[RMDB]
RNA sequence: GGGAACGACUCGAGUAGAGUCGAAAAACGUAAAAAUCUGGAAAAGCAGUAUCGCUACCAAUUGCAGUCACUGCAGUAUUUACCGAUUUACAACCGUACAUCGUAUUUACGUGAUGACUUAGCGGCAUCCACCAUGCUACUUCGGUAGCAUGGUGGAAAAAGAAACAACAACAACAAC
Reactivity to DMS in 0.01 (KOAc 150mM, MgCl2 10mM, bicine 150mM(pH8.5), 24C), signal-to-noise 1, nucleotides 027 to 126: a100c080g010u030a040a140a100a060a010u000c040u000g000g000a130a030a090a100g040c050a070g010u000a130u000c110g000c010u000a170c070c080a010a060u000u020g040c090a030g050u010c020a030c000u020g000c000a030g010u000a040u000u000u000a000c210c080g000a010u010u000u000a020c020a080a140c300c180g000u000a000c050a010u000c000g020u000a030u000u000u000a000c030g000u000g000a090u000g000a000c000u030u000a080g020c000g010g080c300a100
Source: RMDB library OK2TRN, as collected in RNAgym. This 177-nucleotide RNA was probed chemically with DMS.